Structure probing data (DMS and 2A3) for a 177-nucleotide construct.
RNA sequence: GGGAACGACUCGAGUAGAGUCGAAAACCCCGGGAUAGCCGAAGUGCCGAGGAAGAGCCGGAGGAGGAGAGGCAAGAGAUCCCGAGGGGGCUUCAGGCUAAAGAGUGGACGAUUUUCGGGGAAGGUCCUAAGCAAGAAGGUUCGCCUUCUUGCUUAGAAAAGAAACAACAACAACAAC
Reactivity to DMS in 0.01 (KOAc 150mM, MgCl2 10mM, bicine 150mM(pH8.5), 24C), signal-to-noise 1, nucleotides 027 to 126: c030c000c000c010g000g000g010a090u010a070g000c000c020g010a090a100g010u000g010c030c000g030a110g030g000a060a070g000a190g020c060c050g020g020a130g010g010a080g030g030a070g010a090g010g010c070a060a080g010a070g000a050u000c010c000c020g010a190g000g000g010g000g010c080u000u000c040a070g020g010c050u010a060a080a110g000a120g000u000g000g000a080c050g000a170u020u000u020u000c040g000g010g030g000a100a120g020g010u010c020
Reactivity to 2A3 in 0.01 (KOAc 150mM, MgCl2 10mM, bicine 150mM(pH8.5), 24C), signal-to-noise 1, nucleotides 027 to 126: c010c000c000c000g020g020g040a060u050a020g020c020c010g020a050a020g020u080g090c020c000g020a050g090g020a030a040g010a020g040c000c030g040g020a060g000g020a030g040g030a110g020a040g020g030c000a040a020g050a000g000a090u030c000c000c000g030a060g020g030g000g070g000c000u000u040c030a040g000g000c020u080a160a040a030g100a050g030u090g000g040a050c030g010a050u020u090u080u060c010g020g010g020g020a030a000g020g000u020c000

The data come from the RNA Mapping Database (RMDB), library 15KREP. For 2A3, 1,245 sequencing reads were counted.